[RMDB]
RNA sequence: GGGAACGACUCGAGUAGAGUCGAAAAAAGAUAUGGAAAGGUGAGGUUCAGCUUUUGACGGUUCCUUAUCUCGGAAACGAGAUUUCAACCGAUAAGCUGAACUCCCCACCACCUUUCCUAAGUCAAAGAACAAUAUAUCGUUCGCGAUAUAUUGUUCAAAAGAAACAACAACAACAAC
Reactivity to DMS in 0.01 (KOAc 150mM, MgCl2 10mM, bicine 150mM(pH8.5), 24C), signal-to-noise 6, nucleotides 027 to 126: a100a070g020a050u000a300u010g010g000a000a000a010g000g000u000g000a120g020g000u000u000c000a010g010c000u000u000u000u000g020a180c180g010g000u000u000c200c050u010u000a020u000c000u000c010g020g000a110a070a180c010g020a000g010a020u000u010u000c080a020a010c010c000g010a160u000a020a020g010c000u000g000a000a010c010u000c040c020c010c020a300c040c000a000c000c000u000u000u000c000c000u000a020a060g000u000c030a100a100a170
Reactivity to 2A3 in 0.01 (KOAc 150mM, MgCl2 10mM, bicine 150mM(pH8.5), 24C), signal-to-noise 4, nucleotides 027 to 126: a000a010g070a040u120a060u190g000g010a010a010a010g000g010u000g010a010g010g020u000u000c000a000g000c010u070u140u150u190g300a190c040g000g020u040u070c050c010u090u070a020u000c010u000c000g020g010a040a090a050c020g000a000g010a010u040u060u110c080a010a010c010c000g060a070u010a070a000g000c000u000g000a000a000c000u010c000c000c000c000a010c000c010a000c000c000u000u010u020c000c000u010a160a040g050u030c080a150a060a120